[RMDB]
Structure probing data (2A3 and DMS) for a 177-nucleotide construct. The DMS profile rests on 2,293 reads. As a SHAPE reagent, 2A3 marks flexible, mostly unpaired nucleotides at the ribose 2'-OH. The reactions ran in a buffer of 150 mM KOAc, 10 mM MgCl2 and 150 mM bicine (pH 8.5), at 24 C. For 2A3, 1,694 sequencing reads were counted.

RNA sequence: GGGAACGACUCGAGUAGAGUCGAAAAGCGAGAAACAUCUAAUUCACUGCCCAGUCCGUUUUUAAAACGAAGCUGCAUUAAAUCUCGUGUUUCACCUAGCAAUUUGAUUGUUCGGUUAUAAAUUGCACCCUAUGGAGUAGUUCGCUACUCCAUAGGGAAAAGAAACAACAACAACAAC
Reactivity to 2A3 in 0.01 (KOAc 150mM, MgCl2 10mM, bicine 150mM(pH8.5), 24C), signal-to-noise 2, nucleotides 027 to 126: g020c000g000a030g020a040a230a010c030a030u060c040u100a210a030u100u080c040a020c060u060g000c030c040c000a000g030u010c060c030g000u000u010u010u070u190a110a210a000a000c010g010a010a020g050c050u050g010c040a030u000u130a060a070a110u030c040u020c030g010u030g080u020u030u030c130a140c020c000u000a010g060c030a010a020u100u060u200g090a100u010u120g070u160u040c050g040g000u130u040a160u050a140a100a010u110u090g000c010a030
Reactivity to DMS in 0.01 (KOAc 150mM, MgCl2 10mM, bicine 150mM(pH8.5), 24C), signal-to-noise 3, nucleotides 027 to 126: g000c030g010a030g000a050a070a040c080a070u010c110u010a070a030u010u010c110a050c130u000g000c100c110c070a040g000u000c050c000g010u010u000u000u010u050a060a080a030a030c040g010a070a070g000c030u000g000c060a030u020u000a060a040a080u000c030u010c110g030u000g010u010u010u000c040a110c020c040u010a070g020c000a000a010u000u000u010g000a080u000u000g030u010u000c120g000g000u010u000a110u000a020a030a050u000u000g030c040a300